[RMDB]
RNA sequence: GGGAACGACUCGAGUAGAGUCGAAAAGACGCCUUUAGAAGAAGAGGCUAGGGGGUAUUGCGGUGUGGGAUACUUAGUAAUAUGCAACGCUAAUUGCAUAAGAUUGUAGGACGGAAUUUACAGUCUUUAGAGAUAAGCACGUUCGCGUGCUUAUCAAGAUAACGAACUGGUUCGCCAGUUCGUUAUCAAAAGAAACAACAACAACAAC
Reactivity to DMS in 0.01 (KOAc 150mM, MgCl2 10mM, bicine 150mM(pH8.5), 24C), signal-to-noise 1, nucleotides 027 to 156: g010a170c070g020c020c010u000u000u000a180g020a160a220g000a100a130g000a070g010g030c020u040a090g000g020g030g000g060u000a030u000u000g030c060g040g000u000g010u000g000g010g010a070u000a060c080u010u000a120g030u000a090a050u000a050u000g010c030a010a040c120g020c130u020a050a150u000u020g040c000a030u000a050a140g000a080u010u010g020u010a040g000g010a130c020g010g020a030a300u000u000u020a060c020a040g000u000c010u000u000u000a100g000a180g000a040u000a000a030g020c000a000c000g000u000u000c300g010c000g080u000g020c030u000u000a000u020c000a050a050
Reactivity to 2A3 in 0.01 (KOAc 150mM, MgCl2 10mM, bicine 150mM(pH8.5), 24C), signal-to-noise 5, nucleotides 027 to 156: g050a020c040g030c010c020u060u070u110a220g020a240a000g020a060a000g020a040g010g020c030u040a080g000g010g010g000g030u070a130u090u190g040c080g000g020u150g030u170g100g000g000a060u090a110c030u050u070a020g030u040a040a090u020a030u100g000c010a020a010c050g030c150u080a080a070u060u020g000c000a010u000a070a000g020a040u030u050g020u030a020g010g080a010c070g000g030a050a040u100u080u060a020c020a010g010u000c000u030u080u050a140g020a000g000a050u000a010a000g000c000a010c010g010u030u050c170g010c010g080u000g000c000u010u000a000u010c000a000a000

Structure probing data (DMS and 2A3) for a 207-nucleotide construct. The RNA was probed in 150 mM KOAc, 10 mM MgCl2 and 150 mM bicine (pH 8.5) at 24 C. The 2A3 profile rests on 4,734 reads. For DMS, 2,215 sequencing reads were counted. Source: RMDB library M2RFPK, as collected in RNAgym. For 2A3 the reverse transcriptase was SuperScript II with manganese.